Chemical mapping of a 177-nucleotide RNA with 2A3 and DMS. The reactions ran in a buffer of 150 mM KOAc, 10 mM MgCl2 and 150 mM bicine (pH 8.5), at 24 C. For 2A3 the reverse transcriptase was SuperScript II with manganese.
RNA sequence: GGGAACGACUCGAGUAGAGUCGAAAAAGUCUAGGUAACUAGGCUACAUAAAUGAGACCUAUUAUACCGGCUGAAACGGCAGUCCUCCCAGGAGCAAGUAAGGAGGGGAUGAGUUGAGGUUCAACCCUAACAUCAGAAGGUUCGCCUUCUGAUGUUAAAAAGAAACAACAACAACAAC
Reactivity to 2A3 in 0.01 (KOAc 150mM, MgCl2 10mM, bicine 150mM(pH8.5), 24C), signal-to-noise 6, nucleotides 027 to 126: a000g030u020c030u050a020g010g040u070a110a040c010u000a000g000g000c000u020a020c040a080u290a040a120a080u170g040a040g020a060c000c010u000a030u110u080a100u110a060c000c000g030g000c020u030g020a070a070a030c000g030g010c020a020g020u010c000c020u010c040c030c000a020g030g030a020g010c090a090a020g040u160a060a050g050g020a010g020g010g000g000a020u050g020a020g060u080u100g030a030g020g010u010u040c020a030a060c010c010c000
Reactivity to DMS in 0.01 (KOAc 150mM, MgCl2 10mM, bicine 150mM(pH8.5), 24C), signal-to-noise 6, nucleotides 027 to 126: a020g020u010c000u010a020g000g000u050a100a110c030u000a010g010g000c000u000a060c140a080u030a050a090a100u010g000a120g010a090c010c010u000a050u010u030a130u010a090c040c020g010g000c060u010g010a070a120a060c050g000g000c060a060g000u010c040c030u000c040c040c040a130g000g000a060g010c130a070a070g010u030a080a110g000g000a050g000g020g000g000a110u010g010a130g010u000u000g000a080g000g010u000u000c050a090a070c020c020c050